[RMDB]
RNA sequence: GGGAACGACUCGAGUAGAGUCGAAAAUUGGUACAUGGGUGCUCCAGAAGUUUUGGUUAGUGCGAUCCGUGAGUUUCGUGAUUGUUCUGACGGCAAUUCUGAUUCUAACUAUUCUAAUAUGCGCUCGGACCCCAGGGACGUUCGCGUCCCUGGGGUCAAAAGAAACAACAACAACAAC
Reactivity to 2A3 in 0.01 (KOAc 150mM, MgCl2 10mM, bicine 150mM(pH8.5), 24C), signal-to-noise 1, nucleotides 027 to 126: u060u160g050g020u230a160c110a190u230g000g000g020u000g020c000u060c000c000a000g140a160a000g110u030u200u140u050g000g000u000u080a000g000u000g030c000g020a120u000c000c000g140u090g160a160g030u000u050u000c000g030u050g190a120u000u300g060u000u000c080u000g140a000c000g000g030c000a000a030u020u010c160u090g050a220u190u090c000u000a080a080c170u000a090u030u140c000u000a130a110u000a060u030g090c070g000c000u000c000g070